[RMDB]
Conditions: 150 mM KOAc, 10 mM MgCl2 and 150 mM bicine (pH 8.5), 24 C. Chemical mapping of a 177-nucleotide RNA with 2A3 and DMS. DMS adducts were read by reverse transcription with MarathonRT.

RNA sequence: GGGAACGACUCGAGUAGAGUCGAAAACAUGUCCAAGAUAGCUCAACGAUAGCUUUCAAUUGCGCACUAAAAGAAUUUGAAUUUAGUGGCAAACUUUUGAAAGUCUCUGCAACACCUCCAGGGCGAGACACAGGGACCUUUUCGAAGGUCCCUGUGUAAAAGAAACAACAACAACAAC
Reactivity to 2A3 in 0.01 (KOAc 150mM, MgCl2 10mM, bicine 150mM(pH8.5), 24C), signal-to-noise 3, nucleotides 027 to 126: c080a130u180g030u060c050c040a050a000g020a060u090a040g000c020u000c050a120a070c070g060a100u100a050g000c000u000u010u040c020a010a040u030u010g000c190g050c030a000c030u050a020a010a000a000g220a060a300u220u130u250g110a160a130u130u000u000a020g000u000g070g000c020a070a020a080c050u090u080u060u070g030a040a000a000g070u040c020u030c000u040g030c050a070a120c010a040c040c000u000c000c020a030g000g000g050c010g020a040g010
Reactivity to DMS in 0.01 (KOAc 150mM, MgCl2 10mM, bicine 150mM(pH8.5), 24C), signal-to-noise 1, nucleotides 027 to 126: c050a070u010g000u000c000c010a020a020g010a040u000a040g000c000u070c000a040a220c250g000a100u010a160g000c010u000u000u000c000a000a030u000u000g000c040g000c030a000c000u000a000a000a000a170g010a110a100u030u050u050g000a130a160u000u000u000a000g040u000g000g000c000a030a070a070c060u000u040u090u040g000a020a010a000g000u010c000u000c000u000g010c070a090a100c040a080c050c000u000c010c150a040g010g040g000c050g050a060g000